RNA sequence: GGGAACGACUCGAGUAGAGUCGAAAAAACUCUCUAUGGCGCAAUGCGGUAUGACGACGAACGCCGCCCUCUAAAGGACGUCAUCAAGAAGACCUACUUCACCAACCUCGAUUUGGUCCCCGGCAAUAUGACCGUACCAGUUCGCUGGUACGGUCAUAAAAGAAACAACAACAACAAC
Reactivity to 2A3 in 0.01 (KOAc 150mM, MgCl2 10mM, bicine 150mM(pH8.5), 24C), signal-to-noise 2, nucleotides 027 to 126: a000a000c060u000c000u000c000u010a020u050g040g010c020g040c070a150a140u220g010c100g020g060u210a060u300g000a030c130g060a000c090g090a140a030c080g010c020c000g030c060c000c030u020c040u060a180a160a000g100g000a080c000g010u060c010a000u020c080a020a060g010a020a000g000a090c000c000u120a160c030u090u000c060a000c060c030a030a090c000c020u000c000g050a050u000u000u100g040g000u040c000c000c000c000g020g020c000a050a050u000